[RMDB]
The data come from the RNA Mapping Database (RMDB), library M2PK90. Structure probing data (2A3 and DMS) for a 177-nucleotide construct. The reactions ran in a buffer of 150 mM KOAc, 10 mM MgCl2 and 150 mM bicine (pH 8.5), at 24 C. For DMS, 17,461 sequencing reads were counted. For 2A3 the reverse transcriptase was SuperScript II with manganese.
RNA sequence: GGGAACGACUCGAGUAGAGUCGAAAAGUACUAUGCCCGCCAUUAUUGAUGCAUGCUCCACCUCCCACUCCUUAAUAGUUGCUUUGAUGUUUCCUUUCGGUGGGUUCUGCAGCGUCUUUAUCAGAAAGUGCUAUACAUAAUUCGUUAUGUAUAGCACAAAAGAAACAACAACAACAAC
Reactivity to 2A3 in 0.01 (KOAc 150mM, MgCl2 10mM, bicine 150mM(pH8.5), 24C), signal-to-noise 2, nucleotides 027 to 126: g000u020a060c020u070a070u160g050c000c030c010g030c030c010a130u090u130a060u050u140g040a030u060g020c060a070u050g020c000u010c020c000a010c010c010u010c020c030c010a030c030u030c030c000u090u120a120a040u060a180g090u070u130g030c020u070u030u080g060a060u120g060u010u040u080c000c000u020u070u130c030g000g000u020g010g000g050u080u030c030u060g000c000a000g010c000g010u000c000u000u080u040a160u110c060a010g150a100a110a010
Reactivity to DMS in 0.01 (KOAc 150mM, MgCl2 10mM, bicine 150mM(pH8.5), 24C), signal-to-noise 8, nucleotides 027 to 126: g010u000a060c080u000a090u010g010c010c010c020g020c110c080a090u010u000a070u000u010g010a060u000g010c040a060u000g010c020u000c030c020a060c030c020u000c020c010c020a100c090u000c040c060u000u000a070a060u010a080g010u010u000g010c050u000u000u000g010a110u000g000u000u000u000c010c030u010u000u010c070g010g010u000g010g000g010u000u000c080u000g020c050a060g010c050g010u000c030u000u000u010a070u010c080a100g000a080a080a090